[RMDB]
RNA sequence: GGGAACGACUCGAGUAGAGUCGAAAAGAAAAUCAAGACCCAACAAUUGGUCUGCAGUUGCCAUGGAUUUCUGGCUUUCAAGAGCCCUUUGCUUUUCUUCCAUAGCCUUGUCCGGGUCAAUUUAAACAUAAUGCUCGGAGUUCGCUCCGAGCAUUAUAAAAGAAACAACAACAACAAC
Reactivity to DMS in 0.01 (KOAc 150mM, MgCl2 10mM, bicine 150mM(pH8.5), 24C), signal-to-noise 2, nucleotides 027 to 126: g000a030a010a110a090u090c150a090a110g010a030c000c080c050a130a070c170a030a090u030u000g030g000u000c030u040g000c070a170g000u000u040g000c090c030a040u050g000g000a050u000u010u020c090u000g000g000c080u000u000u060c280a100a080g010a070g030c030c000c050u020u000u040g010c050u000u000u030u010c030u020u010c040c050a040u000a110g010c030c010u040u030g010u010c040c180g010g000g010u010c150a040a070u040u000u020a050a080a170c170
Reactivity to 2A3 in 0.01 (KOAc 150mM, MgCl2 10mM, bicine 150mM(pH8.5), 24C), signal-to-noise 2, nucleotides 027 to 126: g000a000a000a020a040u130c110a040a050g030a070c000c000c020a000a030c070a000a130u040u070g060g030u140c000u130g020c090a090g050u180u100g020c030c030a060u030g070g020a140u090u120u020c050u030g080g000c000u060u010u110c180a230a050g030a000g260c000c000c000u010u030u160g110c100u140u170u020u030c050u060u000c000c010a000u110a050g000c000c000u050u030g020u090c080c030g000g000g040u030c000a000a090u050u030u140a020a040a000c060